[RMDB]
RNA sequence: GGGAACGACUCGAGUAGAGUCGAAAAUUAAAGUACGUAGAAGCGGCGUGAAGCAUGUAGAAAGCUUUGCGAGCAUAUCGAGCUACAUGUGAGCGAAAGCGGUUACGUACAUCGAUAUGCAAAAAAACACUAUGAUCCCGUUCGCGGGAUCAUAGUGAAAAGAAACAACAACAACAAC
Reactivity to 2A3 in 0.01 (KOAc 150mM, MgCl2 10mM, bicine 150mM(pH8.5), 24C), signal-to-noise 1, nucleotides 027 to 126: u050u050a080a000a010g000u000a000c010g000u010a000g000a040a010g100c020g170g000c110g050u000g020a020a000g000c000a010u000g000u000a010g040a060a040a010g040c060u180u130u270g150c170g060a000g000c000a000u020a000u040c010g010a010g040c020u000a010c000a010u030g130u120g020a010g030c030g130a130a060a000g000c000g020g010u020u010a000c020g000u010a000c000a000u000c000g000a000u020a060u110g000c020a000a120a000a000a020a000a040
Reactivity to DMS in 0.01 (KOAc 150mM, MgCl2 10mM, bicine 150mM(pH8.5), 24C), signal-to-noise 2, nucleotides 027 to 126: u020u000a050a070a060g000u000a010c000g000u000a020g000a070a090g010c000g020g070c140g010u000g000a100a170g000c010a010u020g010u000a010g000a080a090a120g010c220u000u010u000g050c230g010a100g040c010a000u000a000u000c010g000a020g010c020u000a000c000a020u010g000u000g000a210g020c020g010a030a070a060g000c020g010g010u000u000a010c010g010u000a000c020a070u000c000g000a010u000a010u000g010c000a000a000a040a090a030a050a130
Structure probing data (2A3 and DMS) for a 177-nucleotide construct. Source: RMDB library M2PK90, as collected in RNAgym. Values cover nucleotides 27 to 126. For 2A3 the reverse transcriptase was SuperScript II with manganese.